[RMDB]
RNA sequence: GGGAACGACUCGAGUAGAGUCGAAAACUUCGGUAAGGCUUCAAUCCAACUAGAACACCAGAUGCAAGCCAUCGUAUGUGAGCAAGAGAAGAAUGGAUUUAUGCUUGACACUGAUAUUGCAGAGGAAAUCUAUACCACAUGUCUACGAGAGACUAACGUCCAGGUUACAGUUCGCUGUAACCUGGACAAAAGAAACAACAACAACAAC
Reactivity to 2A3 in 0.01 (KOAc 150mM, MgCl2 10mM, bicine 150mM(pH8.5), 24C), signal-to-noise 1, nucleotides 027 to 156: c000u030u030c040g000g040u100a070a040g010g020c000u100u010c130a050a040u030c080c000a000a060c110u070a040g080a080a020c000a000c080c020a160g000a020u000g010c010a110a040g010c090c000a010u020c000g080u080a040u190g100u000g040a020g120c060a120a000g100a010g060a170a060g050a050a080u080g080g010a000u000u040u050a060u160g000c000u010u000g000a000c030a000c160u010g000a020u080a010u270u100g070c050a040g000a020g150g000a000a040a110u160c110u080a100u030a140c060c000a010c000a140u090g040u000c020u000a030c040g000a000g000a000g000a130c000u000a010a010c060